An RNA of 177 nucleotides, treated with DMS and read out base by base. Source: RMDB library TTRINS, as collected in RNAgym. Conditions: 150 mM KOAc, 10 mM MgCl2 and 150 mM bicine (pH 8.5), 24 C. For DMS the reverse transcriptase was MarathonRT.
RNA sequence: GGGAACGACUCGAGUAGAGUCGAAAAGAUAUGGAUAGUGAGAGCCGAGUCUAUGAAGUCUACUCCUCUUCGGAAACGAAGAGGAGUAGAUGGAGACUCGGAACUACUCUACCACUAUCCUAAGUCACAAGAUUAAGCUGUUCGCAGCUUAAUCUUGAAAAGAAACAACAACAACAAC
Reactivity to DMS in 0.01 (KOAc 150mM, MgCl2 10mM, bicine 150mM(pH8.5), 24C), signal-to-noise 2, nucleotides 027 to 126: g000a030u000a300u010g000g010a010u000a020g020u010g030a060g000a010g000c020c000g000a010g020u020c000u020a300u010g020a140a270g000u000c000u000a000c000u000c000c000u000c000u010u010c030g000g000a100a120a230c000g000a010a000g010a030g000g000a000g000u000a000g010a000u000g020g010a040g030a010c000u010c010g000g000a020a020c030u000a300c000u000c000u010a100c300c050a010c000u010a000u010c000c000u000a020a090g000u000c060a300